[RMDB]
The data come from the RNA Mapping Database (RMDB), library TTRDEL. Structure probing data (DMS) for a 177-nucleotide construct. For DMS the reverse transcriptase was MarathonRT.
RNA sequence: GGGAACGACUCGAGUAGAGUCGAAAAGAUAUGGAAACUCGACCGCAAACACGAUGAAAUCGGAAACGAUGGAGUGUUUGAACUACGGUACCGAGUUUCCUAAGUCAAAGUGAGCUUCGGCUCACAAGCUUAACACAAAGUUCGCUUUGUGUUAAGCAAAAGAAACAACAACAACAAC
Reactivity to DMS in 0.01 (KOAc 150mM, MgCl2 10mM, bicine 150mM(pH8.5), 24C), signal-to-noise 5, nucleotides 027 to 126: g000a030u010a300u000g010g000a000a000a000c000u000c000g000a070c010c000g000c000a010a000a010c010a010c000g000a100u000g020a070a100a010u000c000g000g000a130a090a160c010g020a010u000g000g000a090g000u000g000u000u000u000g010a030a040c140u010a300c010g010g000u000a050c140c010g010a010g000u000u000u000c000c000u000a010a070g000u000c030a090a100a120g020u000g000a010g010c000u000u020c210g020g010c010u000c010a000c010a030a090